[RMDB]
RNA sequence: GGGAACGACUCGAGUAGAGUCGAAAACGACAUCGGCGACGGCUGGGCGGUCACCUUCAAGGUGGAGUCACACAACCACCCGUCCUACGUCGAGCCCUACCAGGGCGCGGCCACCGGGGUGGGCGGCACCUAAUGACUCCUUCGGGAGUCAUUAGGUAAAAGAAACAACAACAACAAC
Reactivity to DMS in 0.01 (KOAc 150mM, MgCl2 10mM, bicine 150mM(pH8.5), 24C), signal-to-noise 3, nucleotides 027 to 126: c050g010a120c080a040u000c060g020g000c070g000a100c110g010g010c050u000g020g010g040c040g000g000u000c030a040c020c030u020u000c160a120a080g010g020u010g010g000a080g000u010c090a110c170a100c180a140a160c030c010a050c030c000c020g000u000c030c010u010a160c180g000u000c000g000a050g000c000c010c010u020a130c240c170a180g020g000g020c000g000c040g000g000c010c050a070c120c110g000g010g020g020u000g000g020g010c040g010g000c170
Reactivity to 2A3 in 0.01 (KOAc 150mM, MgCl2 10mM, bicine 150mM(pH8.5), 24C), signal-to-noise 3, nucleotides 027 to 126: c020g050a020c030a070u080c050g030g030c030g000a050c010g050g050c050u030g030g040g010c040g030g050u060c020a040c030c010u170u200c170a210a060g040g010u020g040g040a070g040u070c020a060c010a000c010a190a110c010c000a010c000c010c000g020u060c000c000u030a050c020g000u000c000g000a010g010c000c010c000u110a190c050c130a090g010g000g000c050g000c010g040g050c000c030a040c060c090g070g000g010g030u030g030g010g000c020g030g000c020